An RNA of 177 nucleotides, treated with 2A3 and read out base by base. The reactions ran in a buffer of 150 mM KOAc, 10 mM MgCl2 and 150 mM bicine (pH 8.5), at 24 C. Source: RMDB library RFM100, as collected in RNAgym. For 2A3 the reverse transcriptase was SuperScript II with manganese.
RNA sequence: GGGAACGACUCGAGUAGAGUCGAAAAGAAAGAAAGAAAGUGGCUCCCACCCUCUGUAACAGCAACUCCAUGUGGAAGUGCCCACUGGUUCCAGUGGGGCUGCUGUUAUCUGGGGUGGCGGCUAGAAAAGGACGUUCAGUUUCGACUGAACGUCCUUAAAAGAAACAACAACAACAAC
Reactivity to 2A3 in 0.01 (KOAc 150mM, MgCl2 10mM, bicine 150mM(pH8.5), 24C), signal-to-noise 2, nucleotides 027 to 126: g120a070a000a030g070a010a060a040g080a050a130a000g090u080g090g000c030u080c030c000c000a000c000c020c000u040c090u030g010u000a000a000c000a000g000c000a000a000c000u000c000c000a060u050g060u030g300g000a040a040g080u090g060c030c020c000a280c090u190g170g000u080u010c000c000a010g000u000g000g000g000g000c000u000g010c020u000g000u010u000a000u060c030u000g000g000g020g000u000g000g000c000g010g000c000u020a000g110a000a090